Structure probing data (2A3) for a 207-nucleotide construct. The RNA was probed in 150 mM KOAc, 10 mM MgCl2 and 150 mM bicine (pH 8.5) at 24 C. The data come from the RNA Mapping Database (RMDB), library RNAMAK. The 2A3 profile rests on 735 reads. 2A3 adducts were read by reverse transcription with SuperScript II with manganese.
[RMDB]
RNA sequence: GGGAACGACUCGAGUAGAGUCGAAAACCGUAGGUGAUGUACAGCUCUUGGAUUUAUACAGCGCCGUGAUUCGAAAGAGUCACGGGAAGCUGUAUUGUCAGAGCUGGCAUCACCUAAACGGAAAACACGUUCCUCAUGUUCGCAUGAGGAACGUGAACCCCACUUUUACCUUCGGGUAAAAGUGGGGAAAAGAAACAACAACAACAAC
Reactivity to 2A3 in 0.01 (KOAc 150mM, MgCl2 10mM, bicine 150mM(pH8.5), 24C), signal-to-noise 1, nucleotides 027 to 156: c000c000g010u000a010g060g000u040g000a000u050g000u110a300c000a000g020c000u010c020u120u300g090g010a040u220u300u000a000u020a010c040a000g000c200g220c110c010g000u000g000a000u010u010c010g050a060a110a130g000a020g030u000c000a010c010g030g000g010a050a000g010c000u000g000u000a000u000u000g010u000c000a000g000a000g030c000u000g000g000c000a000u020c000a000c000c000u000a000a000a000c000g010g060a000a100a070a050c000a000c010g000u010u000c000c000u000c000a010u000g080u140u130c230g000c160a000u000g000a000g010g020a000a000c000g000u000g000a000a010